[RMDB]
RNA sequence: GGGAACGACUCGAGUAGAGUCGAAAAUGCACUGCGCUUUGCUCUCCUUGCUGUGGUCCCACCGGGAAGUCAAGUCCACAGGAAGCAUUCGUAUCCGUACGCAGCGACUCCCGUGCACCGGCCAACAUCAUAAAUCGGAGUUCGCUCCGAUUUAUGAAAAAGAAACAACAACAACAAC
Reactivity to 2A3 in 0.01 (KOAc 150mM, MgCl2 10mM, bicine 150mM(pH8.5), 24C), signal-to-noise 3, nucleotides 027 to 126: u070g020c030a010c080u080g000c010g020c090u020u060u100g000c010u030c010u010c030c020u020u130g030c040u050g030u030g030g040u030c000c010c030a070c040c040g010g000g030a090a030g060u080c040a060a020g040u040c030c010a030c020a020g010g050a030a010g010c030a070u050u120c030g020u070a060u040c040c040g030u020a040c070g000c040a020g010c020g050a040c010u010c020c020c020g020u020g000c010a030c040c010g050g000c030c010a060a030c010a100
Reactivity to DMS in 0.01 (KOAc 150mM, MgCl2 10mM, bicine 150mM(pH8.5), 24C), signal-to-noise 5, nucleotides 027 to 126: u000g020c040a090c070u010g010c110g020c090u000u010u010g010c040u010c080u000c030c030u000u010g010c060u000g030u000g010g000u000c020c020c020a150c240c080g000g000g000a080a080g010u010c080a100a160g010u000c040c020a040c090a070g010g010a040a130g000c070a080u010u000c050g020u010a080u010c070c040g000u000a060c080g000c100a070g000c030g000a080c050u010c000c020c020g020u000g000c050a070c060c020g010g000c040c050a070a100c160a120

Chemical mapping of a 177-nucleotide RNA with 2A3 and DMS. Values cover nucleotides 27 to 126. For 2A3, 5,718 sequencing reads were counted. It was measured as part of the RMDB library OK2TST. The RNA was probed in 150 mM KOAc, 10 mM MgCl2 and 150 mM bicine (pH 8.5) at 24 C.